[RMDB]
RNA sequence: GGGAACGACUCGAGUAGAGUCGAAAAAGCAACGAGUGUGUGUGGGACGUUUUAUCCCAAGCUCUGAGUAGAGCACGCGCUCACACACACCGCGAGCGAGCAUCACCAGAGCGCAAACGCUGGUAAAUUAUCGACCGUUAUUCGUAACGGUCGAUAAAAAAGAAACAACAACAACAAC
Reactivity to DMS in 0.01 (KOAc 150mM, MgCl2 10mM, bicine 150mM(pH8.5), 24C), signal-to-noise 2, nucleotides 027 to 126: a130g020c050a150a070c020g000a260g000u010g030u010g000u000g010u010g020g000g000a100c010g010u000u010u020u010a120u010c040c060c030a100a120g010c000u000c000u000g020a220g030u010a060g000a020g000c000a080c130g010c060g010c000u000c000a010c000a010c000a000c010a000c000c030g020c020g010a110g030c030g010a130g010c080a130u000c090a030c000c010a030g010a070g000c070g010c170a050a100a110c070g000c020u000g010g010u000a050a040a160
Reactivity to 2A3 in 0.01 (KOAc 150mM, MgCl2 10mM, bicine 150mM(pH8.5), 24C), signal-to-noise 1, nucleotides 027 to 126: a020g020c040a030a020c040g010a100g050u000g000u000g000u010g010u030g040g030g010a040c000g020u030u060u090u300a150u000c060c000c010a010a020g070c010u050c020u050g300a270g160u300a000g140a000g040c020a000c090g060c010g000c000u010c000a050c000a020c000a000c030a000c000c010g060c040g000a000g000c020g020a010g030c020a050u060c010a010c050c000a020g020a010g160c120g000c010a050a020a060c080g000c060u010g040g000u060a070a080a040
The record gives the reactivity of an RNA of 177 nucleotides to DMS and 2A3.
For 2A3 the reverse transcriptase was SuperScript II with manganese.
For DMS the reverse transcriptase was MarathonRT.
The data come from the RNA Mapping Database (RMDB), library M2PK90.
The RNA was probed in 150 mM KOAc, 10 mM MgCl2 and 150 mM bicine (pH 8.5) at 24 C.
The DMS profile rests on 1,668 reads.